[RMDB]
This 207-nucleotide RNA was probed chemically with 2A3 and DMS. For 2A3, 758 sequencing reads were counted. Conditions: 150 mM KOAc, 10 mM MgCl2 and 150 mM bicine (pH 8.5), 24 C.
RNA sequence: GGGAACGACUCGAGUAGAGUCGAAAAGGCUGAUGCCGGAGCCGAUACCGGAAUACGAGACCUGAUGUGCGGUCGAAUGCACUGAAGUACGAAAGUACGAAGAGGUCAAACCGAGGACCGAGACUCGAUAUGCUCGAUAGAUGGAGCUUUACAUCAAAAUUACCACGAGGUUCGCCUCGUGGUAAUUAAAAGAAACAACAACAACAAC
Reactivity to 2A3 in 0.01 (KOAc 150mM, MgCl2 10mM, bicine 150mM(pH8.5), 24C), signal-to-noise 1, nucleotides 027 to 156: g050g000c040u030g050a110u130g040c040c000g010g000a000g000c000c080g080a010u080a090c000c010g030g040a030a030u170a140c120g050a050g010a160c010c000u010g040a080u060g010u000g010c010g000g040u030c050g050a040a040u050g000c000a000c060u020g070a030a000g000u000a000c000g020a110a050a020g000u010a000c000g000a020a010g020a020g070g000u020c020a000a080a000c020c000g000a000g040g020a000c000c130g080a020g100a120c000u000c010g050a120u000a040u170g030c000u000c040g000a030u040a100g070a010u040g040g030a010g030c010u110u120u090a040c030a030u030c010a010a160
Reactivity to DMS in 0.01 (KOAc 150mM, MgCl2 10mM, bicine 150mM(pH8.5), 24C), signal-to-noise 1, nucleotides 027 to 156: g010g010c030u050g000a150u000g010c020c040g070g000a150g000c020c100g000a120u000a030c010c010g030g010a040a060u000a060c080g020a150g000a050c030c020u000g020a200u030g020u000g030c040g000g010u010c170g060a060a170u000g030c010a020c000u000g060a230a210g020u000a030c030g000a270a130a160g000u000a090c000g060a070a040g000a060g020g040u010c030a060a120a180c160c030g000a100g030g030a090c040c000g000a080g060a050c010u000c020g000a100u050a000u000g010c020u010c030g030a140u000a050g020a120u000g010g000a020g000c080u000u010u000a070c000a120u000c020a060a110
Source: RMDB library OK3TST, as collected in RNAgym.
2A3 adducts were read by reverse transcription with SuperScript II with manganese.